[RMDB]
RNA sequence: GGGAACGACUCGAGUAGAGUCGAAAAACUCAGUACUGGGUACUCAGGUGGACGCCCCUCCCACUGCUCAGAUGCUGGGGACAGGCUCAACUUCAGGCUUCAGCGUGAGCCCCGUCCCUGACCUGCAGAGCCCCCUUGCGUUGGGGCAGGACAGCCAAUUUAGGAUAGGUUUCGACCUAUCCUAAAUAAAAGAAACAACAACAACAAC
Reactivity to DMS in 0.01 (KOAc 150mM, MgCl2 10mM, bicine 150mM(pH8.5), 24C), signal-to-noise 2, nucleotides 027 to 156: a070c000u000c030a080g010u000a060c030u000g030g020g020u000a050c100u000c100a130g010g020u020g000g020a100c060g010c030c020c010c030u020c020c000c020a100c060u010g030c000u000c010a080g030a090u000g050c020u000g000g000g040g000a070c040a070g020g000c010u000c040a110a070c050u000u000c040a080g040g000c070u010u000c050a080g020c050g010u000g000a080g000c050c010c040c040g020u000c020c020c010u000g010a040c020c040u000g020c090a140g000a140g010c000c000c000c010c000u000u000g020c080g020u000u000g030g020g040g060c020a020g030g010a080c060a140g010c030c060a130
Reactivity to 2A3 in 0.01 (KOAc 150mM, MgCl2 10mM, bicine 150mM(pH8.5), 24C), signal-to-noise 2, nucleotides 027 to 156: a000c020u030c000a000g030u070a060c070u100g040g040g000u060a090c110u080c190a090g020g050u050g040g000a010c070g050c000c010c000c000u070c000c020c000a020c000u020g020c010u000c010a000g040a180u030g020c010u020g000g040g000g010a030c040a060g000g000c000u010c020a060a090c020u140u130c080a030g040g060c070u090u050c070a020g050c040g150u100g050a010g030c020c000c000c070g000u000c040c000c020u030g030a040c010c000u000g010c060a030g030a050g050c030c010c000c000c000u040u090g030c050g070u100u080g000g000g010g000c010a000g000g010a020c020a010g000c030c020a020